[RMDB]
RNA sequence: GGGAACGACUCGAGUAGAGUCGAAAAGACCCGGAACCCUGAGCACUUUGAGGCCGGAAAAGCCGAUGCGUCCCUGAUGGUAUAUGAGCAUCUGUCGACACCCAAAACCGACAUGGAGGGGGCGAUGCAUCUAUGCCUAGUUCGCUAGGCAUAGAUGAAAAGAAACAACAACAACAAC
Reactivity to 2A3 in 0.01 (KOAc 150mM, MgCl2 10mM, bicine 150mM(pH8.5), 24C), signal-to-noise 3, nucleotides 027 to 126: g000a010c010c000c000g040g040a060a030c000c010c020u040g030a040g100c030a030c100u090u110u140g090a120g030g030c010c020g040g070a100a120a010a000g040c000c000g050a070u120g030c000g030u020c020c000c000u040g020a060u060g050g160u140a130u020a060u260g100a040g030c020a020u030c020u030g010u020c010g010a050c020a150c060c050c010a000a030a010a070c020c030g030a090c040a050u120g080g040a040g060g010g000g000g000c010g000a010u090g000
Reactivity to DMS in 0.01 (KOAc 150mM, MgCl2 10mM, bicine 150mM(pH8.5), 24C), signal-to-noise 4, nucleotides 027 to 126: g000a200c020c010c020g010g020a080a130c070c020c020u020g010a110g010c050a050c080u000u000u000g010a140g020g000c030c020g010g000a070a070a070a150g020c020c030g010a110u000g010c060g040u000c020c000c020u000g000a070u000g000g010u010a080u000a080u010g010a110g000c010a030u000c020u000g010u000c000g010a110c100a100c020c040c050a050a030a100a120c180c020g010a050c070a050u010g000g010a170g000g010g000g000g000c080g000a060u000g010